[RMDB]
RNA sequence: GGGAACGACUCGAGUAGAGUCGAAAACAGUGAUGGAAACAUCACUGAAAAACCGGAAACGGAGAUGACGAUCGCGCGCAUCUCGGGAAACCGUAAACGCGAAAAGAGCUAGCGAAAGCUAGCUCAAAUUAGUCAGUGCUUUCGAGCACUGACUAAUAAAAGAAACAACAACAACAAC
Reactivity to 2A3 in 0.01 (KOAc 150mM, MgCl2 10mM, bicine 150mM(pH8.5), 24C), signal-to-noise 2, nucleotides 027 to 126: c000a010g000u000g000a000u000g000g020a010a030a020c000a000u010c010a010c000u000g000a010a000a000a010a010c000c020g110g040a070a100a000c100g150g010a000g000a000u000g140a140c010g060a070u010c010g000c010g000c010g010c030a000u000c000u000c000g000g040g010a060a000a000c000c000g050u190a160a020a020c000g000c000g010a050a010a010a050g000a000g000c000u000a000g000c010g060a120a020a000g020c000u000a000g010c010u000c020a000a000
Reactivity to DMS in 0.01 (KOAc 150mM, MgCl2 10mM, bicine 150mM(pH8.5), 24C), signal-to-noise 2, nucleotides 027 to 126: c020a020g020u020g000a000u050g020g010a140a060a230c000a020u000c000a000c000u010g000a010a100a080a230a150c000c000g000g120a100a170a050c050g000g000a010g000a000u000g050a170c000g020a060u000c000g000c000g000c050g000c000a040u000c000u000c000g000g020g020a160a120a210c300c070g000u020a020a150a040c040g000c000g060a120a140a080a070g000a030g010c020u000a000g000c000g020a110a020a100g000c000u010a000g000c000u000c000a000a000